The data come from the RNA Mapping Database (RMDB), library RFMREP. Chemical mapping of a 177-nucleotide RNA with DMS and 2A3. For DMS the reverse transcriptase was MarathonRT. The reactions ran in a buffer of 150 mM KOAc, 10 mM MgCl2 and 150 mM bicine (pH 8.5), at 24 C. Reactivities are rounded to 0.1 and cut off at 0 and 3.

RNA sequence: GGGAACGACUCGAGUAGAGUCGAAAACGGUGCCGGAAGGUCACGCGGAGGUGUUAGCGCGAGCGAAGCACCGAAGCCAAGCCCCGGUAAACGGCGGCCGUAACUAUAACGGUCCUAAGGUAGCGAACUAUUAUAGCGAGUUCGCUCGCUAUAAUAGAAAAGAAACAACAACAACAAC
Reactivity to DMS in 0.01 (KOAc 150mM, MgCl2 10mM, bicine 150mM(pH8.5), 24C), signal-to-noise 5, nucleotides 027 to 126: c030g010g010u000g010c000c010g000g010a130a090g020g010u000c050a170c300g000c010g000g000a300g010g010u010g000u000u000a300g000c000g010c260g000a150g010c000g010a140a110g000c010a000c000c000g010a300a170g000c000c050a080a240g000c020c010c010c020g000g000u000a020a070a080c050g000g000c110g010g010c020c000g000u000a070a120c190u020a120u010a080a050c050g000g000u000c010c040u000a100a060g010g020u000a040g020c080g000a090a180
Reactivity to 2A3 in 0.01 (KOAc 150mM, MgCl2 10mM, bicine 150mM(pH8.5), 24C), signal-to-noise 4, nucleotides 027 to 126: c010g030g030u040g010c000c010g020g020a180a100g050g030u080c040a010c050g000c000g000g010a030g000g000u020g080u270u020a010g000c040g010c020g010a030g010c000g000a010a000g000c000a000c010c010g000a010a000g000c000c000a030a020g000c000c000c010c000g010g000u030a090a080a000c030g080g030c010g000g000c000c010g000u030a030a040c080u100a040u070a300a020c020g000g010u060c010c020u090a120a070g140g030u070a020g110c040g050a070a040